The record gives the reactivity of an RNA of 177 nucleotides to 2A3 and DMS. The RNA was probed in 150 mM KOAc, 10 mM MgCl2 and 150 mM bicine (pH 8.5) at 24 C. DMS adducts were read by reverse transcription with MarathonRT. It was measured as part of the RMDB libraries RFM100 and RFMREP.

[RMDB]
RNA sequence: GGGAACGACUCGAGUAGAGUCGAAAAGAUACUCCAGUUAACUCUAUACUUUCCCUGCAAUACGCUAUUCGCCUUAGAUGUAUCUGGGUGGCUGCUCCACUAAAGCCCGGGAAUAUGCAACCAGUUAUUUAGACGCAAAAUUCGUUUUGCGUCUAAAAAAAGAAACAACAACAACAAC
Reactivity to 2A3 in 0.01 (KOAc 150mM, MgCl2 10mM, bicine 150mM(pH8.5), 24C), signal-to-noise 4, nucleotides 027 to 126: g040a010u090a060c030u020c030c010a000g030u080u090a080a070c040u020c040u070a070u050a200c040u020u040u050c010c010c000u010g020c020a030a100u070a110c040g000c040u030a060u040u080c030g020c020c010u080u080a030g010a100u150g060u070a100u020c040u040g000g030g040u030g020g000c010u030g000c020u020c010c010a070c050u080a080a040a100g000c000c000c010g030g010g020a040a070u140a040u170g010c000a030a070c010c020a030g010u030u000a040
Reactivity to DMS in 0.01 (KOAc 150mM, MgCl2 10mM, bicine 150mM(pH8.5), 24C), signal-to-noise 4, nucleotides 027 to 126: g000a100u010a070c070u000c030c070a060g030u010u020a100a110c070u000c010u030a060u020a090c070u010u010u000c010c010c020u000g000c100a080a090u010a080c020g000c060u010a040u020u000c070g010c010c010u010u020a040g010a080u010g000u010a020u010c030u010g010g030g020u010g000g010c030u000g000c060u000c040c020a070c060u000a040a100a140g020c030c020c040g000g030g000a050a060u010a020u020g000c110a100a100c070c050a060g000u010u020a110